[RMDB]
RNA sequence: GGGAACGACUCGAGUAGAGUCGAAAAAGUCCCGCAACGAGCGCAACCCUCGUCCUUAGUUGCUAACAGUUCGGCUGAGCACUCUAAGGAGACUGCCUUCGUAAGGAGGAGGAAGGUGGGGACGACGCUGAGUCAUACAUUUCGAUGUAUGACUCAGAAAAGAAACAACAACAACAAC
Reactivity to DMS in 0.01 (KOAc 150mM, MgCl2 10mM, bicine 150mM(pH8.5), 24C), signal-to-noise 5, nucleotides 027 to 126: a150g000u010c000c000c010g030c240a090a090c130g000a070g010c030g000c040a110a200c020c020c000u000c030g030u000c000c000u000u000a010g010u000u000g000c000u000a090a050c000a010g010u020u050c160g010g000c000u000g000a060g010c000a010c110u000c010u000a010a000g000g000a030g000a040c010u020g020c000c000u000u000c010g000u080a120a150g020g010a000g000g000a010g000g000a010a010g000g010u010g000g000g000g000a130c110g000a200c050g000
Reactivity to 2A3 in 0.01 (KOAc 150mM, MgCl2 10mM, bicine 150mM(pH8.5), 24C), signal-to-noise 8, nucleotides 027 to 126: a000g110u020c010c020c020g000c070a060a070c080g060a040g060c020g000c040a040a130c000c000c000u010c010g010u000c000c000u000u000a010g010u010u020g000c000u010a050a010c000a010g050u070u080c140g110g000c000u000g010a000g000c010a030c040u090c000u010a000a000g010g000a000g000a000c050u070g010c010c000u010u010c000g030u060a080a100g010g010a000g010g000a000g000g010a010a000g020g020u100g000g010g010g030a000c040g020a000c010g000